[RMDB]
Structure probing data (2A3) for a 207-nucleotide construct. Values are in units of 0.01, from 0 to 300, in steps of 10. Values cover nucleotides 27 to 156. For 2A3, 416 sequencing reads were counted. Source: RMDB library M2RFPK, as collected in RNAgym. The reactions ran in a buffer of 150 mM KOAc, 10 mM MgCl2 and 150 mM bicine (pH 8.5), at 24 C.
RNA sequence: GGGAACGACUCGAGUAGAGUCGAAAAUUGCCGAUCGGUAUGGAUGCCACCGUGACGGCUCAAUCACACAAGUGCCAACGAUAACGAGGCGCUCGCUAUUGCUGCGUAACUCACGGCCUGACGGUCUAAAACAGAUUCGUGUUCGCACGAAUCUGAAGGGAAGCUGUACGUUCGCGUACAGCUUCCCAAAAGAAACAACAACAACAAC
Reactivity to 2A3 in 0.01 (KOAc 150mM, MgCl2 10mM, bicine 150mM(pH8.5), 24C), signal-to-noise 1, nucleotides 027 to 156: u100u040g010c000c000g030a020u040c000g000g000u010a020u220g020g210a130u110g080c010c010a050c000c000g000u010g070a020c040g020g000c000u010c010a030a090u090c030a010c000a000c030a070a010g050u030g100c040c000a030a060c300g010a110u150a300a050c070g000a070g000g000c020g000c010u000c000g000c080u050a000u110u140g030c090u010g000c050g090u100a010a010c000u050c020a000c020g100g000c000c000u080g000a030c060g010g000u000c020u140a070a110a140a110c000a000g010a000u000u000c000g000u010g110u070u030c170g050c100a000c010g000a000a000u020c000u000g000a020a000